[RMDB]
RNA sequence: GGGAACGACUCGAGUAGAGUCGAAAAGCACGGAGACAUGCACGGAAACGUGGACGGAGGCUCCAUGUCGAACGUGGCUGUCCGAGGCCUCCGUAUUUGACUGGUAAUUCAGUCGUUAGGACAGCUAGCGACGUAUCAUCUUCGGAUGAUACGUCGCAAAAGAAACAACAACAACAAC
Reactivity to DMS in 0.01 (KOAc 150mM, MgCl2 10mM, bicine 150mM(pH8.5), 24C), signal-to-noise 1, nucleotides 027 to 126: g030c000a080c040g020g020a250g000a030c030a000u000g000c030a040c060g000g000a060a060a120c000g030u000g010g010a060c040g000g000a030g010g000c000u000c060c030a010u000g010u000c060g030a080a140c100g000u020g000g010c010u000g000u000c000c010g000a090g010g000c000c000u000c030c000g000u000a050u010u000u020g000a040c010u020g020g020u040a140a130u010u020c010a010g020u000c000g000u000u000a160g010g020a020c000a010g000c010u000a100
Reactivity to 2A3 in 0.01 (KOAc 150mM, MgCl2 10mM, bicine 150mM(pH8.5), 24C), signal-to-noise 1, nucleotides 027 to 126: g040c010a020c070g020g020a060g000a040c010a010u070g050c040a000c040g080g050a100a000a000c010g010u030g040g070a000c020g020g010a000g030g000c010u000c040c040a010u030g030u050c070g000a150a160c050g050u060g010g010c000u000g010u000c020c000g000a010g030g000c010c000u000c010c000g000u060a210u080u080u170g000a000c010u010g020g060u120a110a110u140u120c000a000g000u000c020g010u030u040a000g000g000a010c000a000g020c000u010a020